[RMDB]
RNA sequence: GGGAACGACUCGAGUAGAGUCGAAAAUUGAAGAAGAAAUUGCUACAUUAGAUGAUGAAGAUAAAGAAAUGUUCUUAGAAGAUUUAGGUAUCGAAGAACCAGGAUUAGAUCGAUUAAUUAGAACAACCAAUAUGCGGCAGUUCGCUGCCGCAUAUUGAAAAGAAACAACAACAACAAC
Reactivity to DMS in 0.01 (KOAc 150mM, MgCl2 10mM, bicine 150mM(pH8.5), 24C), signal-to-noise 1, nucleotides 027 to 126: u050u000g000a080a070g050a090a090g010a010a140a050u000u000g010c000u000a040c090a030u010u010a000g010a080u010g000a060u000g000a150a050g020a080u000a040a010a190g000a080a070a020u000g000u000u000c030u000u000a140g000a030a060g000a030u000u000u000a100g020g000u030a010u020c070g000a050a050g000a080a100c030c030a070g000g010a100u040u000a140g000a040u000c030g000a010u070u010a100a070u110u000a090g010a030a000c030a040a060c240
Reactivity to 2A3 in 0.01 (KOAc 150mM, MgCl2 10mM, bicine 150mM(pH8.5), 24C), signal-to-noise 2, nucleotides 027 to 126: u240u200g040a010a060g130a090a040g110a020a090a090u010u090g010c000u020a180c000a050u120u150a090g010a030u110g000a000u100g070a080a050g090a220u080a140a150a000g110a010a060a000u150g100u090u000c000u000u050a070g030a220a010g000a000u110u020u000a100g100g000u040a100u050c050g020a110a040g000a040a130c150c000a250g130g030a100u170u170a020g020a080u020c000g020a040u130u160a060a050u030u090a150g000a130a080c100a030a030c000